[RMDB]
RNA sequence: GGGAACGACUCGAGUAGAGUCGAAAAUCGAGUUAAAUGCGGGAUGUGAUGGGCUGGCUACAUCUGCAUCCUUUAGGUCAGCCCCUACCUGCUCUAUGCUUCUAAGUGCCAUCCUAGUAGCCUGGUACCCAACCUAUUGUUUCGACAAUAGGUUGGGAAAAGAAACAACAACAACAAC
Reactivity to DMS in 0.01 (KOAc 150mM, MgCl2 10mM, bicine 150mM(pH8.5), 24C), signal-to-noise 2, nucleotides 027 to 126: u010c110g000a050g030u000u000a050a210a100u010g000c020g030g000g000a100u010g020u000g000a170u020g020g000g020c010u020g020g010c010u000a080c160a070u000c090u010g030c090a070u000c030c030u000u000u020a080g010g000u000c030a020g010c020c020c000c040u000a040c020c020u000g020c060u010c060u000a050u000g010c010u010u000c050u000a110a100g000u000g000c000c010a060u000c010c020u010a140g020u000a100g030c020c010u000g000g010u000a200
Reactivity to 2A3 in 0.01 (KOAc 150mM, MgCl2 10mM, bicine 150mM(pH8.5), 24C), signal-to-noise 2, nucleotides 027 to 126: u130c020g010a030g040u050u130a090a050a040u120g020c000g020g020g000a090u080g150u100g300a200u200g020g020g000c020u010g000g020c000u020a030c040a180u100c070u130g000c010a110u140c010c040u050u020u070a050g030g000u010c010a000g010c000c020c010c000u030a090c000c000u010g060c000u000c020u020a040u110g000c000u100u010c040u050a100a100g030u080g090c000c010a010u040c020c010u010a050g030u000a000g050c030c030u010g030g050u050a090